[RMDB]
RNA sequence: GGGAACGACUCGAGUAGAGUCGAAAAGAUAAGCUAGCAGCAAAAAGGAGCCGAUUCCCACCAAGUUCGGAAAGAGAUACCGGGCGAGGCGCUGAAGAAAGAAUCUCGCUUCAGACACCCCAAGGACAUGACCUUAAAAUGUUCGCAUUUUAAGGAAGUAUUGUUUAAUGUUCGCAUUAAACAAUACAAAAGAAACAACAACAACAAC
Reactivity to DMS in 0.01 (KOAc 150mM, MgCl2 10mM, bicine 150mM(pH8.5), 24C), signal-to-noise 1, nucleotides 027 to 156: g000a150u010a070a080g020c060u000a130g000c010a130g000c020a030a070a100a120a150g020g000a070g000c010c000g010a190u010u000c010c020c020a110c080c030a030a170g010u000u020c060g000g000a080a090a140g000a200g010a140u000a030c050c040g020g010g000c070g010a150g040g020c050g020c030u000g000a070a070g020a060a050a080g010a090a100u000c030u000c020g020c030u000u000c000a060g000a300c070a050c080c020c010c020a110a110g010g000a140c080a070u000g020a110c000c000u000u000a010a000a000a020u020g010u020u010c300g020c020a000u000u000u000u000a000a020g010g010a050a040
Reactivity to 2A3 in 0.01 (KOAc 150mM, MgCl2 10mM, bicine 150mM(pH8.5), 24C), signal-to-noise 3, nucleotides 027 to 156: g040a070u130a090a020g020c040u060a010g030c050a000g010c050a040a010a050a090a080g090g000a020g000c010c020g070a120u040u040c020c000c010a010c030c020a070a000g010u030u050c040g010g040a110a110a060g050a040g000a030u070a090c000c010g000g000g000c020g000a030g020g010c040g000c030u030g010a030a000g020a040a210a020g030a090a120u040c070u040c150g010c000u010u020c020a050g040a070c020a110c020c020c020c030a030a040g060g000a040c040a120u150g090a050c000c000u000u000a000a000a000a000u000g010u020u040c180g000c130a000u000u000u010u010a000a000g000g000a000a020
This 207-nucleotide RNA was probed chemically with DMS and 2A3. The RNA was probed in 150 mM KOAc, 10 mM MgCl2 and 150 mM bicine (pH 8.5) at 24 C. It was measured as part of the RMDB library M2RFPK. Values cover nucleotides 27 to 156.